[RMDB]
RNA sequence: GGGAACGACUCGAGUAGAGUCGAAAAGGGUAGCACAAGGAUUAAUGUGAAACAGAAAAGUGAUAUGCAAAGAAGAUGGAGAUUCAAUUGUUUAUUGUUACGAAAAAAACACUUUUGUGUUUCUCGUGUAGUAUAAUAUAUUCGUAUAUUAUACUACAAAAGAAACAACAACAACAAC
Reactivity to 2A3 in 0.01 (KOAc 150mM, MgCl2 10mM, bicine 150mM(pH8.5), 24C), signal-to-noise 9, nucleotides 027 to 126: g040g000g010u040a020g010c040a020c040a090a040g080g020a090u100u150a130a080u140g030u020g060a060a030a020c020a010g090a030a050a020a010g030u040g050a040u040a030u180g030c030a030a040a060g030a040a020g030a050u100g060g030a060g010a050u070u070c040a040a080u100u060g080u090u120u080a090u060u070g050u050u110a060c070g090a050a040a020a010a000a010a000c040a020c020u070u090u050u080g080u010g000u010u000u000c020u010c020g020u040
Reactivity to DMS in 0.01 (KOAc 150mM, MgCl2 10mM, bicine 150mM(pH8.5), 24C), signal-to-noise 5, nucleotides 027 to 126: g000g000g010u000a050g010c070a040c080a090a070g010g010a130u020u030a070a060u020g010u020g000a060a050a080c050a040g000a020a030a040a040g030u010g000a060u010a040u010g000c040a040a040a100g000a040a070g010a060u010g010g000a100g000a080u020u010c060a040a100u010u000g010u010u010u020a050u020u010g010u010u010a070c100g030a010a010a050a080a040a040a080c070a020c090u010u000u000u010g020u000g000u000u000u000c030u000c180g000u020